[RMDB]
RNA sequence: GGGAACGACUCGAGUAGAGUCGAAAAGAUAUGGAGAAGAACUACGUUUCCCCGAUGAAAUUAUUCGGAAACGAAUAAUGGAGGAACAACGCUUCUCCUAAGUCAAACCUGGACUUCGGUCCAGGAACUCCAUAAUAGCCUUCGGGCUAUUAUGGAGAAAAGAAACAACAACAACAAC
Reactivity to 2A3 in 0.01 (KOAc 150mM, MgCl2 10mM, bicine 150mM(pH8.5), 24C), signal-to-noise 2, nucleotides 027 to 126: g030a000u090a040u150g000g020a000g010a040a010g030a130a060c080u080a060c300g070u050u080u080c030c050c010c000g120a180u300g060a000a110a180u030u010a010u000u000c010g050g050a010a050a060c000g000a030a000u000a000a000u070g000g010a130g100g000a050a080c050a020a020c030g010c030u000u020c000u080c000c000u020a150a020g000u000c010a080a070a100c000c000u000g010g000a000c000u010u100c300g130g010u000c020c000a010g000g000a000a000
Reactivity to DMS in 0.01 (KOAc 150mM, MgCl2 10mM, bicine 150mM(pH8.5), 24C), signal-to-noise 1, nucleotides 027 to 126: g010a050u000a300u000g000g000a020g020a020a000g030a080a080c070u010a130c200g000u000u010u000c000c000c030c020g010a100u000g010a090a040a030u000u000a030u000u000c020g000g000a090a060a140c000g010a030a010u000a010a000u010g020g000a070g000g000a020a030c040a040a130c300g010c010u000u000c000u000c010c010u000a050a080g010u000c000a080a160a150c000c000u000g010g000a010c000u020u020c220g030g010u000c000c010a010g000g000a030a040

The data come from the RNA Mapping Database (RMDB), library TTRDEL.
The record gives the reactivity of an RNA of 177 nucleotides to 2A3 and DMS.
The DMS profile rests on 940 reads.
The reactions ran in a buffer of 150 mM KOAc, 10 mM MgCl2 and 150 mM bicine (pH 8.5), at 24 C.